[RMDB]
RNA sequence: GGGAACGACUCGAGUAGAGUCGAAAAGCUCUGCGAGACAGAUCGAACAACAAAGAGAGAUCGAAAAUCUUAGGGGAGAGAACGAAUCUGUCGUCUUCUCUAGGACAUUGUCGAUCAGAUGUCCAAAGACCAUUCAUGGGUUCGCCUAUGAGUGGUCAAAAGAAACAACAACAACAAC
Reactivity to 2A3 in 0.01 (KOAc 150mM, MgCl2 10mM, bicine 150mM(pH8.5), 24C), signal-to-noise 5, nucleotides 027 to 126: g000c000u000c000u000g000c000g000a000g000a010c010a010g010a040u020c000g030a030a020c010a030a010c020a010a260a000g110a010g010a010g000a010u000c000g000a000a030a020a050u000c000u010u000a000g010g000g020g000a010g000a000g030a060a030c030g030a060a140u160c110u170g040u050c050g130u000c000u010u000c000u000c000u010a000g000g020a010c020a090u070u140g090u040c000g000a000u010c010a010g040a100u070g040u000c010c010a130a130a030
Reactivity to DMS in 0.01 (KOAc 150mM, MgCl2 10mM, bicine 150mM(pH8.5), 24C), signal-to-noise 2, nucleotides 027 to 126: g010c030u000c000u000g000c000g000a300g000a120c040a070g000a050u010c000g010a300a150c040a040a080c260a020a130a200g000a150g000a170g000a000u000c000g000a140a040a080a140u010c000u000u010a000g010g000g000g010a000g000a100g010a080a020c030g020a080a160u040c240u070g000u000c020g000u000c010u000u010c000u000c000u010a040g010g010a010c100a070u020u010g010u000c020g000a110u000c010a060g010a120u020g010u000c020c030a150a130a240
Source: RMDB library OK1LIB, as collected in RNAgym. Chemical mapping of a 177-nucleotide RNA with 2A3 and DMS. Conditions: 150 mM KOAc, 10 mM MgCl2 and 150 mM bicine (pH 8.5), 24 C. For DMS the reverse transcriptase was MarathonRT.